Conditions: 150 mM KOAc, 10 mM MgCl2 and 150 mM bicine (pH 8.5), 24 C. An RNA of 177 nucleotides, treated with DMS and 2A3 and read out base by base. In probing experiments dimethyl sulfate is read out at A N1 and C N3, which are open when not base-paired. DMS adducts were read by reverse transcription with MarathonRT. It was measured as part of the RMDB library OK2TRN. For 2A3 the reverse transcriptase was SuperScript II with manganese.
[RMDB]
RNA sequence: GGGAACGACUCGAGUAGAGUCGAAAACGGUUUUGUGCUGGUGCGAGCUCAGCGCCUGGGCCUGCGACGAGCCGAACGCCCGCCCGGAAUCGACGCCGCGCCCGUCGUCCCAUCCGCGCGGGAAUUCCGACGAUUCAUCGUUCGCGAUGAAUCGUCGAAAAGAAACAACAACAACAAC
Reactivity to DMS in 0.01 (KOAc 150mM, MgCl2 10mM, bicine 150mM(pH8.5), 24C), signal-to-noise 1, nucleotides 027 to 126: c130g000g020u020u010u010u010g010u010g030c050u000g010g010u000g010c040g000a060g010c010u000c040a080g030c150g000c140c110u010g020g020g000c000c070u000g020c040g030a060c020g000a080g000c030c040g020a050a080c170g010c000c020c000g010c000c030c000g000g010a110a110u000c050g010a040c040g010c070c050g000c030g010c010c050c020g020u000c020g000u000c030c010c070a230u000c050c050g030c300g000c010g010g000g010a080a060u000u000c070
Reactivity to 2A3 in 0.01 (KOAc 150mM, MgCl2 10mM, bicine 150mM(pH8.5), 24C), signal-to-noise 1, nucleotides 027 to 126: c050g020g080u060u040u090u250g110u140g000c000u070g100g030u030g030c000g090a020g000c000u010c050a020g100c020g050c160c070u050g020g090g010c000c050u030g000c000g160a050c040g000a000g050c010c010g000a040a010c040g030c000c000c000g000c010c030c010g000g020a040a080u110c030g000a020c010g020c040c020g020c000g020c080c020c020g000u020c000g020u000c000c030c000a020u020c040c010g080c000g010c010g010g010g050a020a040u110u000c060